[RMDB]
RNA sequence: GGGAACGACUCGAGUAGAGUCGAAAAAGCUGAGUACGCUCAGCAACCCUGGCUCGGUCCCGGAGUCGUUCUAUACGCCGUUUGUACUUGAUAAAAUGGCGUAGAGCGACUAAGGAACCAGGACAAAAUCGUAGGGAUUCUUCGGAAUCCCUACGAUAAAAGAAACAACAACAACAAC
Reactivity to DMS in 0.01 (KOAc 150mM, MgCl2 10mM, bicine 150mM(pH8.5), 24C), signal-to-noise 1, nucleotides 027 to 126: a010g020c020u010g030a000g010u000a080c300g020c030u000c000a010g000c010a040a000c000c000c010u000g030g010c070u010c060g010g000u000c000c000c000g000g020a140g000u000c000g000u000u000c010u000a210u040a080c010g010c010c010g060u040u000u000g000u040a120c140u050u000g010a200u030a190a050a020a000u000g020g000c000g000u000a010g000a000g000c000g000a000c050u000a090a110g010g030a030a000c000c000a030g000g000a120c050a090a090a110
Reactivity to 2A3 in 0.01 (KOAc 150mM, MgCl2 10mM, bicine 150mM(pH8.5), 24C), signal-to-noise 3, nucleotides 027 to 126: a000g000c000u000g010a000g010u040a060c300g010c080u000c010a000g000c000a050a080c010c000c000u000g140g030c000u020c070g030g010u020c020c000c000g020g040a050g010u000c010g000u000u040c000u050a130u000a000c020g000c000c000g020u000u010u020g130u050a170c100u120u110g090a040u140a110a070a000a000u030g000g000c000g000u020a000g000a010g000c000g000a000c000u020a020a010g000g010a000a040c000c000a000g000g000a030c080a050a120a070
An RNA of 177 nucleotides, treated with DMS and 2A3 and read out base by base. It was measured as part of the RMDB library RFM100. The 2A3 profile rests on 1,758 reads.